[RMDB]
RNA sequence: GGGAACGACUCGAGUAGAGUCGAAAAGAUAUGGACAGGCGGUACACAUCCUAAGAGCGAUAAGUAUUUGUCGGAAACGACAGGGUACUUUUGACGCUCGAAGGAUGUGUACCGCCUGUCCUAAGUCCUUCUAUAUGUACUUCGGUACAUAUAGAAGAAAAGAAACAACAACAACAAC
Reactivity to DMS in 0.01 (KOAc 150mM, MgCl2 10mM, bicine 150mM(pH8.5), 24C), signal-to-noise 1, nucleotides 027 to 126: g000a090u000a300u020g000g000a030c000a020g010g000c010g010g010u000a000c000a000c010a000u010c000c000u000a030a300g020a010g030c010g020a140u000a000a010g010u010a030u000u030u000g000u000c000g000g000a150a100a260c020g000a000c010a020g010g010g020u000a010c000u000u010u020u000g020a250c060g030c020u000c000g000a200a030g000g000a000u000g000u040g010u000a000c000c000g040c010c020u000g020u010c000c000u000a020a070g010u000c040
The record gives the reactivity of an RNA of 177 nucleotides to DMS. The DMS profile rests on 1,530 reads. The reactions ran in a buffer of 150 mM KOAc, 10 mM MgCl2 and 150 mM bicine (pH 8.5), at 24 C. High DMS reactivity at an A or C suggests that its Watson-Crick edge is free. DMS adducts were read by reverse transcription with MarathonRT.